About this RNA
Chemical mapping of a 207-nucleotide RNA with DMS and 2A3.

[RMDB]
RNA sequence: GGGAACGACUCGAGUAGAGUCGAAAACGGUGGUGGCUAAUGGCGAGUUGUUGGGCACCACGAGGCAUGGUUCGCGCACACAGUGGCGCUAUCAAACGCAGCAUCCGAUGGCGAGCUAUUUGGCAACAGUGCAGGUUGGGCAAUAUGAGCGCUAUGAUGAUUAGCAUGAUUUCGAUCAUGCUAAUCAAAAAGAAACAACAACAACAAC
Reactivity to DMS in 0.01 (KOAc 150mM, MgCl2 10mM, bicine 150mM(pH8.5), 24C), signal-to-noise 2, nucleotides 027 to 156: c060g010g020u000g020g050u000g020g010c050u000a050a060u000g020g060c050g000a190g000u000u010g010u020u010g020g010g050c030a060c010c020a060c030g000a120g000g000c040a110u000g020g040u000u010c100g030c040g020c040a100c040a190c130a170g000u000g010g000c030g020c010u010a050u010c040a070a080a070c000g000c050a080g000c040a090u010c050c020g010a120u000g010g000c000g000a110g030c020u010a050u000u010u000g040g010c040a050a110c070a100g030u000g030c040a060g020g000u000u000g020g020g020c040a060a080u010a050u000g030a120g000c040g030c010u000a080u000g020a260
Reactivity to 2A3 in 0.01 (KOAc 150mM, MgCl2 10mM, bicine 150mM(pH8.5), 24C), signal-to-noise 1, nucleotides 027 to 156: c130g010g000u020g010g010u030g030g000c020u100a130a040u060g160g030c010g000a030g060u040u020g000u060u040g070g020g020c030a010c020c020a050c070g020a050g000g000c050a030u060g000g050u060u060c050g000c000g000c010a000c000a000c000a120g050u130g220g000c020g010c020u060a050u120c010a040a110a030c070g020c010a010g010c000a070u030c040c050g020a030u070g000g020c010g000a000g030c030u050a100u090u100u070g040g000c020a050a040c000a130g050u030g050c010a000g090g000u050u060g060g000g000c020a000a000u090a140u300g020a010g000c040g000c080u040a030u100g140a000